[RMDB]
RNA sequence: GGGAACGACUCGAGUAGAGUCGAAAAAUCAUCGUACAGCGCAGGCCAGCGCUAGAGGCCCUGAUCGCGCUCGUGCAGCGCGUGUGCGUACUCAGGUACACGGCCGAUCCUCGGCCCGGCCAGCGUGAACAGGUACUACGUUCGCGUAGUACCUGUUAAAAGAAACAACAACAACAAC
Reactivity to DMS in 0.01 (KOAc 150mM, MgCl2 10mM, bicine 150mM(pH8.5), 24C), signal-to-noise 3, nucleotides 027 to 126: a070u010c120a090u000c120g010u010a120c130a130g000c010g030c000a040g000g010c000c030a030g000c180g010c010u000a060g030a060g000g010c200c000c040u000g010a040u010c040g010c030g020c000u010c020g040u010g000c130a050g020c030g030c020g010u010g000u000g030c080g010u000a030c080u000c130a140g000g010u000a030c060a120c120g010g010c060c010g010a060u000c070c020u000c060g020g000c010c030c040g000g000c010c010a090g020c010g020u000g010
Reactivity to 2A3 in 0.01 (KOAc 150mM, MgCl2 10mM, bicine 150mM(pH8.5), 24C), signal-to-noise 2, nucleotides 027 to 126: a010u090c060a040u060c050g100u070a070c070a100g020c000g000c020a050g000g000c000c020a030g050c010g000c110u010a060g010a020g020g000c030c020c040u030g040a050u090c010g000c010g000c060u050c070g150u160g030c110a080g090c020g000c010g050u050g010u040g000c000g010u070a080c060u030c050a030g060g060u080a050c040a030c100g060g000c040c030g020a090u050c040c030u040c000g000g040c040c000c010g000g000c000c010a020g020c010g030u030g020